[RMDB]
RNA sequence: GGGAACGACUCGAGUAGAGUCGAAAAGAUAUGGAGCUAUUGAGACGCUAACAUAGAAUCUAAACAGGCUCGGAAACGAGCCUGUUUAGAUUUAGUAUGGACCCGUCAAUGAUGUAGCUCCUAAGUCGAUUUCGAAAUAGUUCGCUAUUUCGAAAUCAAAAGAAACAACAACAACAAC
Reactivity to DMS in 0.01 (KOAc 150mM, MgCl2 10mM, bicine 150mM(pH8.5), 24C), signal-to-noise 3, nucleotides 027 to 126: g000a120u010a300u000g000g000a040g000c000u000a010u000u000g010a130g000a020c010g010c040u000a110a300c010a020u020a060g000a010a000u000c000u000a000a020a010c020a030g030g040c010u000c000g010g000a080a100a260c000g000a010g010c000c000u000g000u000u000u000a000g000a000u000u000u000a060g040u000a000u000g000g000a140c300c300c000g000u000c010a140a230u030g010a170u000g010u000a000g010c010u000c000c000u000a010a080g010u010c110

The record gives the reactivity of an RNA of 177 nucleotides to DMS. The data come from the RNA Mapping Database (RMDB), library TTRINS. DMS (dimethyl sulfate) methylates the pairing face of unpaired adenines and cytosines.